[RMDB]
RNA sequence: GGGAACGACUCGAGUAGAGUCGAAAAUCCUAAGUCUGGAUUGUCAGUUCGAAAGGAGAGCUUGGAUUUACAGUCGGAAACGACUGUUGUCAGCUCUCUGAGUAGAACUUGGAUUUAUCCAGAUAUGGAAAAAGCUGAAGGUUUCGACCUUCAGCAACAGGUUAAUCAUGUUCGCAUGAUUAACCUGAAAAGAAACAACAACAACAAC
Reactivity to DMS in 0.01 (KOAc 150mM, MgCl2 10mM, bicine 150mM(pH8.5), 24C), signal-to-noise 1, nucleotides 027 to 156: u000c000c020u000a070a280g000u000c000u000g000g020a040u010u000g000u040c010a050g000u000u000c010g000a270a300a300g000g000a020g020a020g030c000u020u030g010g050a020u000u010u000a000c000a000g000u030c000g040g000a200a270a210c000g010a030c000u010g010u000u000g020u000c020a060g010c000u010c000u000c040u000g000a030g030u000a160g000a000a040c000u000u050g050g000a050u000u000u010a010u000c000c000a010g020a030u000a070u000g000g000a060a060a060a100a250g010c010u010g000a020a000g010g010u000u000u010c300g010a060c000c000u000u000c020a030g050c000a020a000
Reactivity to 2A3 in 0.01 (KOAc 150mM, MgCl2 10mM, bicine 150mM(pH8.5), 24C), signal-to-noise 3, nucleotides 027 to 156: u000c020c000u010a090a000g010u010c000u000g010g000a020u030u000g010u010c000a000g000u000u000c000g040a020a000a010g030g010a010g010a000g010c030u170u190g220g000a110u300u300u180a000c000a000g000u000c010g040g050a040a080a050c020g000a000c000u010g000u000u000g000u000c000a000g000c000u000c000u010c000u000g010a000g000u010a010g000a000a000c000u000u010g000g010a000u160u110u130a020u000c000c000a000g000a000u050a030u020g000g020a090a050a000a130a040g000c000u000g000a000a000g020g010u020u090u290c210g090a090c000c000u000u000c010a000g000c000a000a000
The record gives the reactivity of an RNA of 207 nucleotides to DMS and 2A3. Values are in units of 0.01, from 0 to 300, in steps of 10. For DMS, 1,839 sequencing reads were counted. It was measured as part of the RMDB library RNAMAK.